[RMDB]
RNA sequence: GGGAACGACUCGAGUAGAGUCGAAAAUGUUACAACAGCCAGUGAUGGUUCCAAUGCUGAAAUUGAAAUUGUCGAUGAGGUUCUGCAUUAAAUUAAUCAACUAAACUUAUGUCUUCACUGCAAUUCGUUAUUAGAGUUGUAGUGGCAGUUUGCAUAAUGUACUAUCUGGGUUCGCCCAGAUAGUACAAAAAGAAACAACAACAACAAC
Reactivity to DMS in 0.01 (KOAc 150mM, MgCl2 10mM, bicine 150mM(pH8.5), 24C), signal-to-noise 1, nucleotides 027 to 156: u010g010u000u020a130c100a070a120c040a060g010c030c050a010g010u000g040a050u000g000g040u000u010c060c050a040a100u000g020c030u020g000a090a130a060u000u000g010a050a030a070u000u010g000u010c040g030a070u010g010a130g050g020u000u010c010u000g020c030a180u000u000a030a030a120u000u010a070a120u000c020a050a120c070u000a050a040a080c100u000u010a070u000g020u000c040u010u000c000a020c000u000g000c000a000a000u010u000c020g010u010u000a170u020u000a130g030a050g030u000u010g000u000a010g040u010g000g020c130a040g040u000u010u000g040c050a070u010a060a210
Reactivity to 2A3 in 0.01 (KOAc 150mM, MgCl2 10mM, bicine 150mM(pH8.5), 24C), signal-to-noise 2, nucleotides 027 to 156: u080g010u030u080a090c010a110a010c010a090g030c010c020a020g020u040g110a070u040g000g020u090u000c010c020a060a050u040g030c040u080g060a080a110a110u090u080g070a070a140a060u150u070g090u150c100g030a050u090g020a050g110g000u060u030c030u050g000c000a010u000u180a030a030a040u110u120a030a060u070c020a000a080c060u140a140a000a110c050u090u030a010u070g030u080c010u000u010c030a000c000u000g000c000a000a010u010u000c000g040u160u200a150u190u130a120g000a000g000u000u000g000u020a000g010u010g000g000c000a010g020u060u170u140g000c010a000u080a050a040
The record gives the reactivity of an RNA of 207 nucleotides to DMS and 2A3. The reactions ran in a buffer of 150 mM KOAc, 10 mM MgCl2 and 150 mM bicine (pH 8.5), at 24 C. For DMS, 2,240 sequencing reads were counted. The 2A3 profile rests on 1,222 reads.